[RMDB]
RNA sequence: GGGAACGACUCGAGUAGAGUCGAAAAACAUGAUACCAGAGCUAACGAACAUACUGAACGUUGGAACCCUCCUCCUAACACUGAUAUCGUUAGGCGUACGAUUCCGGAGUCUGACUGGCCAGUUCAAUCCUUCCAAACUGUUCGCAGUUUGGAAGGAAAAAGAAACAACAACAACAAC
Reactivity to DMS in 0.01 (KOAc 150mM, MgCl2 10mM, bicine 150mM(pH8.5), 24C), signal-to-noise 2, nucleotides 027 to 126: a080c130a210u030g000a110u030a070c110c010a050g000a210g010c000u020a110a090c030g030a020a150c160a110u020a080c130u020g000a030a030c100g020u000u020g050g000a060a130c050c040c030u000c010c040u000c020c000u010a020a000c090a030c110u020g000a060u030a070u020c100g000u000u000a020g010g040c120g020u000a110c040g030a170u000u010c010c020g000g000a040g000u000c060u020g000a110c020u010g000g000c090c050a000g030u000u010c050a010a180
Reactivity to 2A3 in 0.01 (KOAc 150mM, MgCl2 10mM, bicine 150mM(pH8.5), 24C), signal-to-noise 3, nucleotides 027 to 126: a000c100a150u180g010a050u130a060c040c000a000g000a010g060c010u060a040a040c020g060a050a000c010a100u150a090c070u030g090a050a010c020g070u020u040g020g030a040a110c000c020c000u020c020c000u030c000c010u060a070a000c020a010c050u110g130a140u070a040u260c030g020u040u000a080g000g050c000g050u120a060c080g010a090u070u080c020c020g020g020a040g000u010c000u020g070a100c030u020g040g000c000c000a020g010u000u010c050a020a040